[RMDB]
An RNA of 177 nucleotides, treated with DMS and 2A3 and read out base by base. 2A3 adducts were read by reverse transcription with SuperScript II with manganese. Conditions: 150 mM KOAc, 10 mM MgCl2 and 150 mM bicine (pH 8.5), 24 C. Source: RMDB library OK2TST, as collected in RNAgym.
RNA sequence: GGGAACGACUCGAGUAGAGUCGAAAAAGGCCCGCACACCUGACGCGUUGGUGACCGAUGACCUGAUCGAGUACCACCGGCUGCCGGCCGCGGGCGGGGUCGCCAUGACCACCGUCGCCUAUUGCGCACGUAAAUGAUAGUUCGCUAUCAUUUACGUAAAAGAAACAACAACAACAAC
Reactivity to DMS in 0.01 (KOAc 150mM, MgCl2 10mM, bicine 150mM(pH8.5), 24C), signal-to-noise 9, nucleotides 027 to 126: a130g010g010c010c010c060g010c040a080c120a110c090c030u010g010a110c060g010c070g000u000u000g010g010u000g010a060c030c010g000a040u000g000a130c200c160u010g000a080u000c020g010a130g010u000a070c050c010a040c040c010g010g010c060u010g030c040c150g000g010c110c080g020c060g010g010g010c020g000g000g010g010u000c010g010c150c150a100u010g010a030c010c010a080c030c020g000u000c040g010c030c070u000a100u010u010g010c080g020c170
Reactivity to 2A3 in 0.01 (KOAc 150mM, MgCl2 10mM, bicine 150mM(pH8.5), 24C), signal-to-noise 9, nucleotides 027 to 126: a000g050g010c000c020c000g010c010a050c000a020c010c060u090g080a050c030g030c030g080u060u070g030g010u040g100a100c010c010g020a020u050g150a260c020c090u110g050a050u030c030g020a040g070u030a050c030c000a010c010c010g050g010c040u060g000c010c020g020g000c010c030g010c040g020g000g000c020g000g010g000g000u020c020g030c140c070a160u240g010a010c010c030a090c040c030g040u040c020g040c010c010u140a210u130u250g050c110g010c020